Conditions: 150 mM KOAc, 10 mM MgCl2 and 150 mM bicine (pH 8.5), 24 C. Chemical mapping of a 177-nucleotide RNA with DMS and 2A3. Values cover nucleotides 27 to 126. For 2A3 the reverse transcriptase was SuperScript II with manganese. The data come from the RNA Mapping Database (RMDB), libraries RFM100 and RFMREP. DMS adducts were read by reverse transcription with MarathonRT.

RNA sequence: GGGAACGACUCGAGUAGAGUCGAAAAAGCCAUGCUACGGCAUGGCAUAUGGGCCCUUAAACCAUUCAUGUUGCCAUCCAAAUCAUGAAUGUUUUGGAGGCCCGUGGACGACCACUACGGUGGUCGACGAUACUGAGCCUUUCGAGGCUCAGUAUCGAAAAGAAACAACAACAACAAC
Reactivity to DMS in 0.01 (KOAc 150mM, MgCl2 10mM, bicine 150mM(pH8.5), 24C), signal-to-noise 3, nucleotides 027 to 126: a080g010c020c000a000u000g000c000u000a060c230g020g000c010a000u000g000g020c020a000u000a000u000g000g010g010c020c000c000u010u000a020a010a000c020c000a010u010u000c000a000u000g010u000u020g030c160c110a080u060c250c110a100a080a050u040c000a010u000g000a030a010u000g010u000u000u000u000g000g000a080g000g020c000c000c000g030u010g020g010a200c000g000a010c000c000a010c010u010a100c220g030g020u000g010g010u000c000g010a070
Reactivity to 2A3 in 0.01 (KOAc 150mM, MgCl2 10mM, bicine 150mM(pH8.5), 24C), signal-to-noise 7, nucleotides 027 to 126: a000g020c010c000a000u000g000c000u030a040c240g110g000c010a010u010g010g000c000a000u030a010u010g000g000g000c000c000c000u010u100a010a010a010c040c010a000u010u010c000a000u010g030u050u110g170c110c100a150u100c090c060a120a100a100u090c010a000u000g000a020a000u000g000u010u000u000u000g080g000a140g000g000c000c000c000g000u020g050g010a030c020g000a000c000c010a000c010u040a030c240g110g000u000g000g000u000c000g000a010